An RNA of 177 nucleotides, treated with DMS and 2A3 and read out base by base.
DMS (dimethyl sulfate) methylates the pairing face of unpaired adenines and cytosines.
For 2A3 the reverse transcriptase was SuperScript II with manganese.

RNA sequence: GGGAACGACUCGAGUAGAGUCGAAAAUUCGGCCAGUCGCAGCGCUAGCUCCGCCGACACCGGCGAGAUAUCGAGUUGUGAGCGUAACAGCGAGGUUUCGACCUCGUGGUGGUGUGCAUUGCCGACGCCUCGUGAGUUGGUUCGCCAACUCACGAGGAAAAGAAACAACAACAACAAC
Reactivity to DMS in 0.01 (KOAc 150mM, MgCl2 10mM, bicine 150mM(pH8.5), 24C), signal-to-noise 1, nucleotides 027 to 126: u020u000c040g030g010c000c050a050g040u010c020g000c020a040g030c040g010c000u040a140g010c000u020c000c000g030c030c040g000a140c180a050c160c060g000g000c020g040a080g000a030u000a160u010c090g000a160g000u060u010g000u000g030a020g000c030g030u000a010a090c130a300g000c010g010a060g000g000u000u000u040c040g000a110c010c000u000c000g070u000g000g020u000g000g000u020g000u020g000c070a120u010u030g000c000c000g000a020c300g000
Reactivity to 2A3 in 0.01 (KOAc 150mM, MgCl2 10mM, bicine 150mM(pH8.5), 24C), signal-to-noise 2, nucleotides 027 to 126: u050u010c010g020g000c040c040a010g050u080c010g000c070a030g000c000g010c130u020a000g010c000u050c070c050g030c000c010g040a030c080a160c170c000g000g000c010g000a110g010a050u170a040u050c090g000a020g100u120u040g090u110g160a000g010c010g070u130a170a000c000a080g000c000g000a000g040g080u060u160u140c180g000a080c000c000u050c010g000u040g000g080u020g010g000u040g010u040g000c130a130u000u060g000c000c000g000a000c030g040